RNA sequence: GGGAACGACUCGAGUAGAGUCGAAAAGAUAUGGAAUGAACUACUGGUUCCGGUAGGCGUUGAAAACAAUGUUGCGUCGGAAACGACGCAACAUUGUUGGAGCCUAUUGACCAGCAUUCCUAAGUCACGUAUGUUAUCGGUUCGCCGAUAACAUACGAAAAGAAACAACAACAACAAC
Reactivity to DMS in 0.01 (KOAc 150mM, MgCl2 10mM, bicine 150mM(pH8.5), 24C), signal-to-noise 2, nucleotides 027 to 126: g000a050u010a300u000g010g010a030a010u000g000a050a040c100u030a300c010u000g000g010u000u010c300c160g040g030u000a000g000g000c000g030u000u000g000a190a100a010a030c000a010a010u000g030u000u000g000c000g000u010c010g010g010a120a110a300c010g030a020c010g000c000a010a000c000a000u000u000g010u000u000g000g000a060g000c010c000u000a010u000u000g000a030c010c000a030g010c000a000u000u000c000c000u000a070a180g010u000c030a300
Reactivity to 2A3 in 0.01 (KOAc 150mM, MgCl2 10mM, bicine 150mM(pH8.5), 24C), signal-to-noise 1, nucleotides 027 to 126: g000a040u140a040u200g000g000a040a000u020g000a080a120c100u240a120c030u300g050g100u250u150c210c050g000g050u010a000g000g010c030g260u300u040g030a010a020a000a000c000a010a010u010g070u050u000g060c000g000u050c020g070g090a130a120a060c010g000a000c000g000c010a000a010c010a000u010u050g010u000u000g010g010a000g000c030c030u000a010u010u020g040a000c030c030a010g050c020a000u020u050c010c000u010a190a030g120u080c020a030